[RMDB]
RNA sequence: GGGAACGACUCGAGUAGAGUCGAAAAGGCGUGGUGGCACAUGCCCGUAAUCCCAGCUACUUGGGAGGCCAAGGCAGGAGAAUCACUUGAACCCGGGAGGUGGAAGUUGUAGUGAGCCUAGAUUGUGCCACUCACUCCAGCCUGGGCAACAAGAGCGCAGCUUGCAUAUAUUCGUAUAUGCAAGCUGAAAAGAAACAACAACAACAAC
Reactivity to 2A3 in 0.01 (KOAc 150mM, MgCl2 10mM, bicine 150mM(pH8.5), 24C), signal-to-noise 3, nucleotides 027 to 156: g050g000c030g000u000g010g010u060g070g000c050a010c010a070u040g010c020c010c020g030u050a050a100u020c000c000c020a000g020c010u160a150c020u130u010g010g030g010a070g050g010c010c020a050a020g010g010c030a020g040g060a040g060a050a090u120c040a010c060u020u040g080a040a050c000c000c000g040g080g030a150g100g140u080g020g100a140a160g030u150u100g010u190a000g000u020g060a080g000c000c020u160a210g070a300u090u170g040u140g050c020c000a010c000u020c000a010c010u000c010c000a000g000c000c010u000g000g010g000c000a060a030c010a040a060g020a020g030c100g000
Reactivity to DMS in 0.01 (KOAc 150mM, MgCl2 10mM, bicine 150mM(pH8.5), 24C), signal-to-noise 2, nucleotides 027 to 156: g040g050c010g080u000g050g030u010g030g000c110a110c020a080u000g020c010c010c010g020u000a080a090u000c010c010c010a100g010c050u000a040c100u000u010g050g010g030a070g040g010c020c070a080a030g010g000c050a050g010g000a050g020a110a100u010c010a070c020u010u010g010a140a120c020c000c040g000g010g010a150g020g040u000g000g020a050a090g020u000u000g000u010a040g000u000g010a180g030c060c040u000a130g000a200u020u000g010u010g030c010c030a020c010u000c020a070c000u000c020c000a040g000c010c020u020g020g040g000c030a050a100c030a060a070g000a160g030c060g010
The record gives the reactivity of an RNA of 207 nucleotides to 2A3 and DMS. The DMS profile rests on 4,520 reads. Reactivities are given for positions 27 through 156. For DMS the reverse transcriptase was MarathonRT. Source: RMDB library OK3TST, as collected in RNAgym. Conditions: 150 mM KOAc, 10 mM MgCl2 and 150 mM bicine (pH 8.5), 24 C.